[RMDB]
RNA sequence: GGGAACGACUCGAGUAGAGUCGAAAAAUUUUCGCCUAUUGGGUAGCCAACCCGUCGGCCUAUGGUGUCGUUGAGUUCGGCGCCGAGGGCAUGGCGCUGUCUCUGGAGGAGAAGCCGGUGACCCCGACGGUUAAGAUGAUUUCGAUCAUCUUAACCGAAAAGAAACAACAACAACAAC
Reactivity to DMS in 0.01 (KOAc 150mM, MgCl2 10mM, bicine 150mM(pH8.5), 24C), signal-to-noise 4, nucleotides 027 to 126: a100u020u000u010u000c070g010c000c000u010a100u010u020g000g000g000u010a110g000c080c100a090a140c080c040c020g040u000c030g000g000c020c010u000a130u030g010g000u010g020u000c000g000u020u020g020a120g000u060u010c030g020g010c000g000c000c000g010a140g010g000g020c050a070u010g020g000c030g000c050u010g020u000c020u000c020u000g020g020a100g020g010a080g000a090a080g010c080c050g000g000u020g010a170c070c000c010c030g000a170
Reactivity to 2A3 in 0.01 (KOAc 150mM, MgCl2 10mM, bicine 150mM(pH8.5), 24C), signal-to-noise 9, nucleotides 027 to 126: a000u140u100u030u060c090g030c020c010u040a100u070u150g060g010g000u030a030g040c020c020a040a060c050c000c000g010u020c020g040g020c000c010u190a230u300g030g000u040g000u020c020g020u060u130g140a210g230u170u100c020g010g000c000g000c010c000g030a190g010g010g000c050a070u120g020g000c010g000c030u040g110u080c000u000c010u060g210g070a100g040g070a070g050a070a010g060c040c040g030g010u050g050a100c030c000c000c000g040a040

This 177-nucleotide RNA was probed chemically with DMS and 2A3. The RNA was probed in 150 mM KOAc, 10 mM MgCl2 and 150 mM bicine (pH 8.5) at 24 C. For 2A3 the reverse transcriptase was SuperScript II with manganese. For DMS, 9,967 sequencing reads were counted. DMS adducts were read by reverse transcription with MarathonRT. Reactivities are rounded to 0.1 and cut off at 0 and 3.